[RMDB]
RNA sequence: GGGAACGACUCGAGUAGAGUCGAAAAAGGUCAAAUCAGGUAGGCUACACAUCCCUUAAUAUCAAUACCUGCUUCUAAAAUGGCAUUACGGACACCGAGGGUACUAGAAUAUCCAGAGAGGACCCAAGUAGCUUGUCUCAAAAUCAGUCAAGGGGGAGCAUUUAUACCUGUUCGCAGGUAUAAAUGCAAAAGAAACAACAACAACAAC
Reactivity to 2A3 in 0.01 (KOAc 150mM, MgCl2 10mM, bicine 150mM(pH8.5), 24C), signal-to-noise 3, nucleotides 027 to 156: a010g030g000u040c040a000a030a200u030c010a020g020g010u020a020g010g050c020u130a030c050a000c010a150u050c010c000c000u060u140a240a140u180a080u250c060a070a050u060a100c010c020u020g070c060u110u040c060u140a120a180a150a140u070g030g000c000a020u050u080a050c070g030g040a030c030a000c100c010g010a030g040g000g010u010a070c020u040a020g070a130a050u050a040u150c040c020a010g040a020g030a030g120g010a020c000c040c000a020a020g030u050a000g040c050u030u070g030u000c010u010c020a080a170a050a070u100c070a030g090u030c020a020a100g050g000g010g000g010a030
Reactivity to DMS in 0.01 (KOAc 150mM, MgCl2 10mM, bicine 150mM(pH8.5), 24C), signal-to-noise 1, nucleotides 027 to 156: a050g040g030u000c040a120a060a070u010c060a080g020g000u010a050g000g030c010u000a110c040a130c030a100u000c020c000c000u010u010a070a080u010a070u000c020a070a050u010a020c040c000u000g020c040u010u010c080u010a070a110a120a090u000g000g010c040a070u010u000a080c170g020g000a120c080a110c040c070g050a080g010g050g020u010a020c040u000a060g010a050a080u010a050u010c040c030a100g000a140g030a070g000g010a070c010c020c010a010a170g010u000a060g000c030u000u000g000u000c010u000c060a020a080a120a060u010c050a070g010u000c080a020a120g020g040g000g060g020a110
Chemical mapping of a 207-nucleotide RNA with 2A3 and DMS. The data come from the RNA Mapping Database (RMDB), library OK3TST. The reactions ran in a buffer of 150 mM KOAc, 10 mM MgCl2 and 150 mM bicine (pH 8.5), at 24 C.